[RMDB]
RNA sequence: GGGAACGACUCGAGUAGAGUCGAAAAGGAGGUGGAGAUGCCAUGCCGACCCGAAGAGGAAAGAAGAACUCGGACGCGAACCGUGAGUGGAACCCUGAUCCUUUAUUGGGGAGUACACUCGAGGAGUAAGGGGUCAGGUUCGCCUGACCCAAAAGAAACAACAACAACAAC
Reactivity to DMS in 0.01 (KOAc 150mM, MgCl2 10mM, bicine 150mM(pH8.5), 24C), signal-to-noise 5, nucleotides 027 to 129: g000g030a040g030g060u010g000g000a000g030a080u030g030c000c090a110u050g020c050c030g040a160c080c040c070g010a090a050g010a000g000g050a050a030a030g040a060a050g050a050a070c160u040c000g040g060a140c090g050c050g060a080a070c050c010g050u070g020a080g030u020g010g060a120a140c000c000c000u040g040a050u010c200c120u030u040u030a000u060u000g000g040g020g040a060g010u020a130c140a030c010u020c030g000a050g010g050a090g010u040a060a080g000
Reactivity to 2A3 in 0.01 (KOAc 150mM, MgCl2 10mM, bicine 150mM(pH8.5), 24C), signal-to-noise 4, nucleotides 027 to 129: g020g000a000g010g000u100g000g000a060g010a060u100g060c050c030a060u130g020c000c010g070a060c010c000c000g000a030a030g010a010g020g000a010a030a060g020a020a000g010a030a010c020u010c020g000g010a000c060g010c020g000a030a020c000c030g040u090g000a030g020u020g010g000a050a040c010c000c000u000g020a020u120c010c100u080u160u110a050u050u070g040g000g010g000a020g040u050a040c010a010c020u000c010g000a040g020g020a030g010u060a030a050g030